[RMDB]
RNA sequence: GGGAACGACUCGAGUAGAGUCGAAAACUACCAGCGAUUUAGGUAGUCUCAUUGAUUGUAAUGCGGCUUCAGUUAACCAAAUUGUCUUGCGUAAUUCUAAUGGUGCUUGCAUUUGGAACGCUGCUGCGAUGUUGCGUAUCUUCGGAUACGCAACAUCAAAAGAAACAACAACAACAAC
Reactivity to DMS in 0.01 (KOAc 150mM, MgCl2 10mM, bicine 150mM(pH8.5), 24C), signal-to-noise 1, nucleotides 027 to 126: c060u030a040c030c000a120g000c290g000a100u000u000u000a080g010g000u010a000g000u010c020u000c010a080u000u000g000a110u000u000g020u020a050a070u010g030c020g020g020c020u000u010c060a120g000u000u000a070a170c000c040a000a030a010u000u000g010u000c020u000u010g030c000g070u000a060a040u000u010c210u010a090a060u010g030g020u000g020c020u000u000g030c010a020u000u000u000g020g030a040a100c040g020c020u000g000c010u000g000c080
Reactivity to 2A3 in 0.01 (KOAc 150mM, MgCl2 10mM, bicine 150mM(pH8.5), 24C), signal-to-noise 1, nucleotides 027 to 126: c010u020a000c000c000a080g040c050g210a100u070u070u300a080g000g000u000a000g000u020c000u000c000a130u070u140g100a080u020u220g020u150a080a060u160g000c000g010g000c010u020u030c040a130g030u000u070a050a020c000c020a010a000a010u050u090g050u100c020u000u000g020c020g080u080a100a070u160u100c050u200a130a120u170g090g000u140g040c010u010u000g030c000a010u040u000u000g000g020a040a020c000g020c020u030g000c000u020g000c000